[RMDB]
RNA sequence: GGGAACGACUCGAGUAGAGUCGAAAACCCACCUGGAAAAGAAGCACCACUGAGACCGCUCGUAGAAGACGAGUUCGAUAGACUUGGGGUGUACGCGUCGAGGCAACGAGACGUUUAGCCCGCGAGUCACAGCAGAUUUCUUCGGAAAUCUGCUGUGAAAAGAAACAACAACAACAAC
Reactivity to DMS in 0.01 (KOAc 150mM, MgCl2 10mM, bicine 150mM(pH8.5), 24C), signal-to-noise 1, nucleotides 027 to 126: c000c000c010a090c150c100u000g000g030a060a100a130a130g000a170a010g030c070a150c100c060a040c070u000g010a120g000a120c070c020g010c010u000c040g000u000a050g000a180a100g020a100c020g000a010g000u000u000c020g000a090u000a040g010a030c000u000u010g000g000g000g010u000g050u000a020c260g020c000g000u000c000g000a260g000g000c280a150a100c000g000a300g000a000c020g020u000u000u000a070g000c000c000c000g020c000g000a010g000u010
Reactivity to 2A3 in 0.01 (KOAc 150mM, MgCl2 10mM, bicine 150mM(pH8.5), 24C), signal-to-noise 3, nucleotides 027 to 126: c010c000c000a010c010c010u090g070g040a050a000a030a040g090a090a020g020c000a030c000c000a040c060u080g000a010g030a080c020c010g010c000u000c010g030u030a050g030a300a030g140a040c010g000a000g050u100u130c060g090a090u090a100g060a040c050u010u040g000g010g000g000u030g100u050a020c030g000c000g010u050c010g000a000g000g000c010a070a030c000g010a030g010a040c000g020u000u020u030a010g040c020c000c020g160c000g020a000g000u010

Conditions: 150 mM KOAc, 10 mM MgCl2 and 150 mM bicine (pH 8.5), 24 C.
Chemical mapping of a 177-nucleotide RNA with DMS and 2A3.
Reactivities are rounded to 0.1 and cut off at 0 and 3.